[RMDB]
RNA sequence: GGGAACGACUCGAGUAGAGUCGAAAAGAUAUGGAGAUGUUAGGACAUGGAGUACAUUCGGAAACGAAUGGACUCCAACAGCCUACGGCAUCUCCUAAGUCAAAGCAGUCGGGUUCGCCCGACUGCACGGGGAUAAACAGUUCGCUGUUUAUCCCCGAAAAGAAACAACAACAACAAC
Reactivity to DMS in 0.01 (KOAc 150mM, MgCl2 10mM, bicine 150mM(pH8.5), 24C), signal-to-noise 1, nucleotides 027 to 126: g010a010u000a030u020g010g000a030g010a020u010g010u000u000a010g020g000a020c010a300u010g010g010a000g000u010a010c020a010u000u000c000g010g000a000a070a070c000g000a000a010u000g010g000a000c010u000c000c000a070a000c130a200g000c000c000u010a060c300g010g000c000a010u000c000u000c000c000u000a020a050g000u000c010a110a190a090g030c000a000g010u000c000g010g000g000u000u020c300g010c010c000c000g000a000c000u000g010c000a000
Reactivity to 2A3 in 0.01 (KOAc 150mM, MgCl2 10mM, bicine 150mM(pH8.5), 24C), signal-to-noise 1, nucleotides 027 to 126: g020a000u010a010u050g000g000a030g000a000u020g030u010u000a020g020g040a140c270a300u300g040g000a000g000u000a000c000a020u000u010c010g010g020a000a010a000c000g000a000a000u000g030g020a000c000u000c000c000a020a010c000a000g030c000c000u020a030c070g050g000c000a000u000c000u000c000c000u000a010a010g000u000c000a000a060a190g020c000a000g000u010c010g010g020g000u040u130c190g110c070c000c000g020a000c000u000g000c000a000